Structure probing data (DMS and 2A3) for a 170-nucleotide construct. The DMS profile rests on 3,568 reads. The RNA was probed in 150 mM KOAc, 10 mM MgCl2 and 150 mM bicine (pH 8.5) at 24 C.
RNA sequence: GGGAACGACUCGAGUAGAGUCGAAAAUAUGAGGCUGAUACCGAACAGACACAGAAUGUUACUGUUAAACCUAAGAGGUUACGCAAAAAGCGUAAUGUUGACCCUUUGUCCAAUUUUGAACAUAAGGAAAGGAGACCGUUCGCGGUCUCCAAAAGAAACAACAACAACAAC
Reactivity to DMS in 0.01 (KOAc 150mM, MgCl2 10mM, bicine 150mM(pH8.5), 24C), signal-to-noise 2, nucleotides 027 to 129: u090a130u010g030a000g000g030c030u000g010a210u040a000c010c030g020a130a100c000a050g070a060c110a140c080a080g010a170a160u040g040u060u040a070c000u000g030u000u000a050a020a090c000c000u000a210a020g020a120g000g030u030u030a020c000g030c020a070a110a100a200a050g070c010g000u030a010a020u010g030u070u020g010a040c170c040c010u000u000u030g040u000c020c060a010a180u000u020u000u030g060a010a030c070a100u000a030a060g010g010a070a060a100
Reactivity to 2A3 in 0.01 (KOAc 150mM, MgCl2 10mM, bicine 150mM(pH8.5), 24C), signal-to-noise 2, nucleotides 027 to 129: u240a070u040g030a050g060g000c000u020g000a070u020a100c060c000g000a020a000c000a040g150a040c030a010c000a130g020a040a010u080g020u030u150a160c000u010g000u000u080a050a050a000c020c000u040a040a000g000a010g190g010u000u000a020c000g000c000a000a140a100a000a150g000c030g000u000a020a020u070g020u150u090g040a080c000c000c000u000u010u040g070u080c130c030a050a030u020u000u160u140g000a060a000c000a000u050a140a000g010g000a050a000a000